[RMDB]
Notes
Source: RMDB library 15KLIB, as collected in RNAgym. The record gives the reactivity of an RNA of 170 nucleotides to DMS and 2A3. The DMS profile rests on 19,215 reads.
RNA sequence: GGGAACGACUCGAGUAGAGUCGAAAAGGAGAAAAGUAAAGAGAGCAACGGGGCUAGCGAGUGGAUGUUCCGCCUCCCCGGGGAGCCGAGUGAGGCUUAUCCCGGAGUGCCGGGCAAGUCCCCCCAUAACGACGUACCUUCGGGUACGUCAAAAGAAACAACAACAACAAC
Reactivity to DMS in 0.01 (KOAc 150mM, MgCl2 10mM, bicine 150mM(pH8.5), 24C), signal-to-noise 4, nucleotides 027 to 129: g030g010a050g000a010a010a030a020g070u070a050a060a060g020a000g020a060g000c000a020a010c080g000g030g020g060c110u030a100g000c000g020a000g020u040g040g030a000u000g020u030u030c040c040g010c120c020u030c040c070c010c010g000g030g030g000a010g030c060c010g020a110g000u080g040a010g010g030c020u020u020a110u020c000c020c010g030g020a050g000u000g020c110c050g000g000g000c150a070a100g000u030c000c000c000c000c000c000a040u090a050a060c160
Reactivity to 2A3 in 0.01 (KOAc 150mM, MgCl2 10mM, bicine 150mM(pH8.5), 24C), signal-to-noise 5, nucleotides 027 to 129: g060g030a030g030a040a090a040a020g070u180a050a070a030g060a010g010a000g000c000a030a080c060g020g020g030g020c040u030a010g030c030g050a020g010u050g060g030a050u060g050u120u040c020c020g000c000c010u030c000c000c000c000g020g000g000g010a000g000c000c010g020a080g110u260g090a090g000g000c000u020u040a100u130c020c000c000g010g000a010g000u030g040c030c020g010g010g000c020a020a020g050u030c000c000c000c000c000c000a040u070a080a040c110